[RMDB]
RNA sequence: GGGAACGACUCGAGUAGAGUCGAAAACAUUAAAUUUGGUGAAAUAGCCAAUCAUGAUCUGAUACGAUGCAUCAAAAUAAAAUGGAUGCGGUUAUUGUCCGAUAGGGCUUUCUUAUUGGUCGGAGGGUAAGUGAAAAACGUUCGCGUUUUUCACUUAAAAAGAAACAACAACAACAAC
Reactivity to 2A3 in 0.01 (KOAc 150mM, MgCl2 10mM, bicine 150mM(pH8.5), 24C), signal-to-noise 5, nucleotides 027 to 126: c020a010u080u280a120a120a160u130u060u040g050g000u060g080a190a100a110u150a090g050c010c000a010a030u130c060a080u140g100a040u030c040u070g040a020u040a100c090g050a100u180g040c010a000u020c030a010a050a140a200u300a090a110a010a060u210g130g000a010u020g010c000g030g000u110u020a060u070u100g020u010c020c030g050a060u130a140g020g000g010c000u030u130u000c010u020u120a130u020u010g000g020u040c010g040g050a100g030g010g040
Reactivity to DMS in 0.01 (KOAc 150mM, MgCl2 10mM, bicine 150mM(pH8.5), 24C), signal-to-noise 4, nucleotides 027 to 126: c060a080u030u040a030a050a080u000u000u010g010g010u000g010a070a070a130u020a180g010c000c020a050a040u000c110a100u030g020a070u010c050u020g010a040u010a090c090g020a110u000g010c010a000u000c020a060a020a080a110u050a060a060a110a140u040g000g010a010u000g000c000g010g010u000u010a030u010u000g010u010c010c050g020a050u000a010g020g000g020c110u010u010u020c020u000u000a040u000u010g010g000u010c040g010g010a090g020g010g030